This 177-nucleotide RNA was probed chemically with DMS and 2A3.
It was measured as part of the RMDB library OK1LIB.
For 2A3, 53,775 sequencing reads were counted.
RNA sequence: GGGAACGACUCGAGUAGAGUCGAAAAGAAAGUGUGCACUUGAUACCGCGGUAGUGGCAACUGACUUCGGUCACGCGCAGGACUUUGCUGCCACUGCUUAGUCCUGCGGUAUCUUGUGCUCACGAAAGGGUAGCCGUACCUUCGGGUGUGGCUACCCAAAAGAAACAACAACAACAAC
Reactivity to DMS in 0.01 (KOAc 150mM, MgCl2 10mM, bicine 150mM(pH8.5), 24C), signal-to-noise 6, nucleotides 027 to 126: g000a100a110a090g010u000g000u010g010c010a000c000u000u000g000a000u000a000c000c020g000c020g020g000u010a040g010u010g010g000c000a060a300c300u030g010a020c050u000u060c120g010g020u000c040a060c270g000c300g000c030a050g000g000a040c080u020u020u010g000c070u010g000c010c030a040c050u000g000c010u000u010a080g000u010c040c040u000g010c020g000g020u000a000u000c000u000u000g010u000g010c000u000c000a000c010g000a040a080a100
Reactivity to 2A3 in 0.01 (KOAc 150mM, MgCl2 10mM, bicine 150mM(pH8.5), 24C), signal-to-noise 9, nucleotides 027 to 126: g140a030a100a010g000u000g010u010g000c000a000c000u000u010g000a000u000a000c000c000g000c030g030g050u080a030g020u040g060g000c020a060a050c070u060g040a010c000u040u050c180g090g000u030c020a020c100g090c020g020c050a030g010g040a060c040u160u150u120g020c020u050g030c020c020a040c030u010g000c010u050u090a040g050u100c000c050u050g000c000g000g000u000a000u000c000u000u010g000u000g000c000u010c000a000c000g030a060a010a000